Structure probing data (2A3) for a 207-nucleotide construct. The RNA was probed in 150 mM KOAc, 10 mM MgCl2 and 150 mM bicine (pH 8.5) at 24 C.
RNA sequence: GGGAACGACUCGAGUAGAGUCGAAAAUCGGCGGUGACGACGACGUCCUGGGCGCAGUAGUCGAGCGUGUGGCGCACGAUAUCGUAGGUGCGGGUGCCCUCGCGGCGCCAGAGCUCGCGGUUGAGGCGGUACUCCUCGUCGCUGGCCCAGUAGUCGCAGAUGAAAACAUCUUCGGAUGUUUUCAUCUAAAAGAAACAACAACAACAAC
Reactivity to 2A3 in 0.01 (KOAc 150mM, MgCl2 10mM, bicine 150mM(pH8.5), 24C), signal-to-noise 2, nucleotides 027 to 156: u090c040g050g020c050g000g050u100g060a060c040g000a010c050g000a010c030g100u070c010c000u000g020g000g000c300g000c100a000g010u300a110g000u000c000g000a000g000c240g000u010g000u000g040g130c000g000c020a190c240g040a010u000a010u040c020g000u030a210g010g040u100g060c000g000g000g020u040g010c010c030c010u110c160g110c300g010g000c010g000c000c000a000g050a010g030c020u030c010g010c000g000g000u020u020g020a020g000g020c020g000g080u010a010c010u020c010c000u000c000g010u010c010g010c010u010g000g000c000c020c010a010g000u020a000g000u000c010g000c030